Conditions: 150 mM KOAc, 10 mM MgCl2 and 150 mM bicine (pH 8.5), 24 C.
Structure probing data (2A3) for a 207-nucleotide construct.
Values cover nucleotides 27 to 156.
2A3 adducts were read by reverse transcription with SuperScript II with manganese.
It was measured as part of the RMDB library OK3TST.
RNA sequence: GGGAACGACUCGAGUAGAGUCGAAAAAAUGUCACCUUAAUUGGAGGUCUUUAAUUAGAUAUCCUUUCUUCAUCUUUGAUAUGAGUGUCGGAAUUUGAUUCCUAGUCUCUGCAAAACAACCCCACUUGAUGAAUUCAACUUUUCAACCGCACAAACAGUCCUUCGAUUAUUUCGAUAAUCGAAGGACAAAAGAAACAACAACAACAAC
Reactivity to 2A3 in 0.01 (KOAc 150mM, MgCl2 10mM, bicine 150mM(pH8.5), 24C), signal-to-noise 2, nucleotides 027 to 156: a000a050u140g030u020c030a040c010c020u060u070a100a030u050u030g020g000a010g000g030u020c000u030u110u040a160a180u100u060a050g010a040u040a010u050c000c000u050u040u010c030u010u040c000a050u040c030u040u080u090g060a070u140a060u140g020a010g030u010g010u020c030g000g060a030a030u170u130u190g160a160u000u090c000c000u030a110g020u000c000u000c010u030g000c010a030a020a060a050c020a000a050c020c010c000c030a030c100u010u040g010a000u040g030a090a000u090u110c010a010a030c010u160u120u070u060c010a030a030c000c100g110c030a070c100a170a010a030c020a020